The data come from the RNA Mapping Database (RMDB), library M2RFPK. An RNA of 207 nucleotides, treated with DMS and 2A3 and read out base by base. For DMS, 4,884 sequencing reads were counted.
RNA sequence: GGGAACGACUCGAGUAGAGUCGAAAAACGGAUGGUACGCCAUCCGACCAUUGGGUAGAAGCGUUCAAUCAGCACCGUGACGGUGCAGAUGGGAAAUUGCCCAUGUUACGCACCAUACGUGGUGCGAAAAAGCCAUCGGUGUUCGCACCGAUGGCAACCUUCAGUAAUGGUUCGCCAUUACUGAAGGAAAAGAAACAACAACAACAAC
Reactivity to DMS in 0.01 (KOAc 150mM, MgCl2 10mM, bicine 150mM(pH8.5), 24C), signal-to-noise 2, nucleotides 027 to 156: a140c030g040g010a000u000g010g020u000a080c300g030c030c000a010u010c010c000g020a050c030c020a220u010u020g000g040g050u000a070g010a140a100g020c140g040u000u000c020a060a030u010c040a140g030c000a020c000c010g020u000g010a140c180g030g030u010g020c000a000g010a020u010g020g000g030a030a150a090u000u000g000c000c010c010a010u000g000u000u000a110c010g010c000a010c000c000a070u000a110c230g080u000g010g010u020g060c010g000a000a040a030a080a120g000c010c000a000u020c000g010g110u000g030u000u000c300g040c010a010c000c020g000a010u010g000g000c010a000a020
Reactivity to 2A3 in 0.01 (KOAc 150mM, MgCl2 10mM, bicine 150mM(pH8.5), 24C), signal-to-noise 2, nucleotides 027 to 156: a000c010g010g000a000u010g000g000u070a050c230g040c030c000a000u000c000c000g000a010c000c010a140u070u100g000g000g000u020a040g030a140a010g070c060g060u060u070c040a040a060u020c020a020g010c000a000c010c010g140u220g220a190c240g000g000u000g000c020a010g000a000u020g000g000g030a010a170a060u030u030g010c000c000c010a000u060g060u040u130a030c020g000c010a010c000c000a000u040a090c260g090u060g010g010u000g000c000g000a020a010a000a010a000g000c000c000a000u000c000g000g000u030g010u050u050c150g040c090a000c020c000g000a000u000g000g000c000a000a000